[RMDB]
RNA sequence: GGGAACGACUCGAGUAGAGUCGAAAAAGUGGUACAACUAGGUGCGCGUGACGUAUCGGACAUGAAUGCGCGUCCUGGCAGAGGAUCUCAGGAUAUGCUGUCCGCAGUGCAGCGUCAUGUCUGAGAGGGCGCGGUGGAGCUUCGGCUUCGUUGCGCCAAAAGAAACAACAACAACAAC
Reactivity to 2A3 in 0.01 (KOAc 150mM, MgCl2 10mM, bicine 150mM(pH8.5), 24C), signal-to-noise 9, nucleotides 027 to 126: a000g170u130g060g040u140a070c030a090a020c060u040a030g000g040u070g030c010g000c020g030u050g020a030c020g030u060a070u080c010g000g020a010c010a030u130g090a150a040u140g010c020g000c010g030u060c000c010u010g020g010c050a030g040a090g100g060a100u010c020u010c020a010g040g000a020u010a010u060g010c010u010g020u040c010c040g020c070a060g060u080g060c020a010g000c010g010u000c000a010u010g010u000c000u000g000a000g010a010g020
Reactivity to DMS in 0.01 (KOAc 150mM, MgCl2 10mM, bicine 150mM(pH8.5), 24C), signal-to-noise 9, nucleotides 027 to 126: a060g010u010g000g010u020a060c090a120a120c050u010a040g000g010u020g000c020g010c040g000u010g010a060c060g010u010a090u010c070g010g000a050c030a020u010g000a080a050u010g000c010g010c010g000u020c060c010u010g000g010c120a100g000a100g000g000a110u010c020u000c040a030g000g000a020u010a040u030g010c010u010g000u010c040c060g000c120a110g010u020g010c090a050g000c010g010u000c050a010u000g000u000c000u000g000a010g000a080g000